Notes: The data come from the RNA Mapping Database (RMDB), library OK2TRN. An RNA of 177 nucleotides, treated with DMS and 2A3 and read out base by base.
RNA sequence: GGGAACGACUCGAGUAGAGUCGAAAAGGAACUGGCCCAGUCACUGUGGGACUGCGACAAGUAACAGGUAUGGAAGCAUUUGACGUGGUGAAUGAAGGCAUUGCCAGUGAGUCUCUAUUUUGGCCACGUUUAGGGUGCUAUUCGUAGCACCCUAAACAAAAGAAACAACAACAACAAC
Reactivity to DMS in 0.01 (KOAc 150mM, MgCl2 10mM, bicine 150mM(pH8.5), 24C), signal-to-noise 4, nucleotides 027 to 126: g010g010a210a080c020u010g000g030c010c030c010a070g000u000c030a060c090u010g020u000g020g010g020a050c020u000g000c110g000a080c110a080a080g010u010a060a120c110a060g020g020u000a070u000g010g010a070a070g000c090a080u010u010u020g010a060c050g010u000g000g030u000g010a030a030u000g000a080a060g010g000c020a050u000u010g000c020c010a030g010u000g000a170g000u000c010u000c020u010a090u000u000u000u000g020g010c010c020a050c060
Reactivity to 2A3 in 0.01 (KOAc 150mM, MgCl2 10mM, bicine 150mM(pH8.5), 24C), signal-to-noise 2, nucleotides 027 to 126: g080g000a020a000c010u010g050g000c020c020c000a000g000u020c010a000c120u130g030u150g180g030g010a010c000u010g030c030g070a040c030a120a010g050u060a060a060c030a050g000g110u110a080u140g050g050a020a050g000c060a070u050u080u280g030a040c030g030u050g000g000u030g050a000a040u060g020a040a040g010g010c020a020u000u060g020c020c000a000g000u010g010a000g000u040c010u000c000u100a140u050u090u080u130g080g000c000c010a040c050
Conditions: 150 mM KOAc, 10 mM MgCl2 and 150 mM bicine (pH 8.5), 24 C.